An RNA of 207 nucleotides, treated with 2A3 and DMS and read out base by base. DMS adducts were read by reverse transcription with MarathonRT. The 2A3 profile rests on 18,039 reads. 2A3 adducts were read by reverse transcription with SuperScript II with manganese. For DMS, 20,682 sequencing reads were counted. The reactions ran in a buffer of 150 mM KOAc, 10 mM MgCl2 and 150 mM bicine (pH 8.5), at 24 C.
RNA sequence: GGGAACGACUCGAGUAGAGUCGAAAACCAAUGGGAAACCAUUGGCAACUCGGAAACGAGUUGAAGUGGGAAUUACGAUGCAAACCACCGACAAUGCGAUUUUAAGCAUUGUCGAUUACGCCCAUGUCGAUUUUAAGACAUGGAGCGAAGCAUCGAAGCAUCUAGGUCCGUUCGCGGACUUGGAUGCAAAAGAAACAACAACAACAAC
Reactivity to 2A3 in 0.01 (KOAc 150mM, MgCl2 10mM, bicine 150mM(pH8.5), 24C), signal-to-noise 5, nucleotides 027 to 156: c000c000a000a000u010g000g000g010a020a000a010c000c000a000u000u000g010g000c000a000a000c000u000c000g000g040a060a030a030c000g000a000g000u000u000g010a070a000g000u000g000g000g000a030a010u020u030a050c010g000a000u000g000c000a030a000a030c000c000a000c000c000g000a000c000a000a000u000g000c010g070a120u020u020u030u250a090a010g000c000a000u000u000g000u000c000g000a000u000u010a020c010g000c000c000c000a000u000g000u000c010g020a070u010u040u030u300a090a010g000a000c000a000u000g000g000a030g000c000g010a010a010g000c000a000u000c000g000a020a010
Reactivity to DMS in 0.01 (KOAc 150mM, MgCl2 10mM, bicine 150mM(pH8.5), 24C), signal-to-noise 7, nucleotides 027 to 156: c000c000a040a050u010g010g010g010a200a130a170c000c000a020u000u000g020g010c010a010a010c000u000c000g020g010a180a160a250c010g020a020g010u000u000g000a050a160g020u000g000g000g000a150a110u010u000a160c020g020a020u000g010c000a090a090a110c050c070a020c040c000g000a030c000a000a010u010g000c000g000a290u000u000u000u000a130a300g010c000a010u000u010g010u000c000g010a010u000u000a180c010g020c000c000c000a010u010g010u010c000g000a250u000u000u000u000a100a220g000a010c000a000u010g000g000a080g020c010g010a030a110g000c000a010u000c010g000a140a220